The record gives the reactivity of an RNA of 177 nucleotides to 2A3 and DMS.
[RMDB]
RNA sequence: GGGAACGACUCGAGUAGAGUCGAAAAAGCCGUCUACGGACGGCACCCCAUGGCCCUGUCUCCCAACCCUUGUACCAGUGCUGGGCUCAGACCCUGGUACAGGCCUGGGGGACAGGGACCUGGGGAACAUUUAUGUGCAAUUCGUUGCACAUAAAUGAAAAGAAACAACAACAACAAC
Reactivity to 2A3 in 0.01 (KOAc 150mM, MgCl2 10mM, bicine 150mM(pH8.5), 24C), signal-to-noise 9, nucleotides 027 to 126: a000g000c010c000g000u000c000u020a060c220g110g000a000c000g000g010c000a040c000c000c000c000a130u250g010g000c000c000c000u000g000u000c000u010c000c000c000a020a050c030c010c000u040u120g000u000a000c000c000a010g010u020g080c020u050g020g260g050c090u100c080a140g040a300c020c010c000u000g000g000u000a000c000a000g000g000c000c040u020g000g000g000g000g000a000c000a000g000g000g000a000c000c000u000g000g000g000g000a010a000
Reactivity to DMS in 0.01 (KOAc 150mM, MgCl2 10mM, bicine 150mM(pH8.5), 24C), signal-to-noise 7, nucleotides 027 to 126: a060g000c000c000g010u000c000u000a110c220g020g000a010c000g000g010c010a000c000c010c000c000a000u030g010g000c000c000c000u000g010u000c000u000c000c000c000a040a110c270c130c030u010u020g020u000a000c010c000a020g010u010g010c030u010g000g010g020c210u040c030a030g000a120c040c080c000u000g000g000u000a000c000a010g000g000c300c160u010g000g000g000g000g000a000c000a000g010g000g000a000c000c010u010g000g000g000g010a120a100